[RMDB]
RNA sequence: GGGAACGACUCGAGUAGAGUCGAAAAAAGCCUGACGGAGCAAUGCCGCGUGCGGGAUGAAGCGUCUUGACGUGUAAACCGCUGUCAGGGGGUCGAACCAAUGAUUGCCCCCAGAGGAAGUGGCGACGUGGUAGUAGUAGUUCGCUACUACUACCACAAAAGAAACAACAACAACAAC
Reactivity to DMS in 0.01 (KOAc 150mM, MgCl2 10mM, bicine 150mM(pH8.5), 24C), signal-to-noise 1, nucleotides 027 to 126: a040a130g050c030c060u000g000a030c130g020g020a190g000c130a040a020u000g020c000c100g030c060g000u010g030c000g000g080g000a060u000g000a270a300g000c010g010u000c070u010u000g010a040c010g000u000g020u010a100a300a300c000c000g000c000u000g000u010c010a090g010g000g000g000g010u000c080g000a040a150c080c070a060a130u030g000a200u010u000g010c010c010c000c000c000a010g000a080g000g000a060a100g020u000g010g020c000g020a070c240
Reactivity to 2A3 in 0.01 (KOAc 150mM, MgCl2 10mM, bicine 150mM(pH8.5), 24C), signal-to-noise 1, nucleotides 027 to 126: a000a000g090c010c010u020g000a050c060g100g000a040g140c030a120a120u160g030c010c000g030c030g020u020g000c000g000g040g000a120u300g010a090a000g000c000g000u000c020u110u120g120a010c000g000u020g000u040a000a000a010c000c000g000c020u030g050u000c030a030g000g000g030g000g000u100c090g050a060a060c050c010a080a030u180g080a100u000u130g000c000c000c000c000c000a000g010a010g050g010a070a050g000u010g020g000c010g010a020c030
The record gives the reactivity of an RNA of 177 nucleotides to DMS and 2A3. The 2A3 profile rests on 1,114 reads. Source: RMDB library RFMREP, as collected in RNAgym. Values cover nucleotides 27 to 126. Conditions: 150 mM KOAc, 10 mM MgCl2 and 150 mM bicine (pH 8.5), 24 C.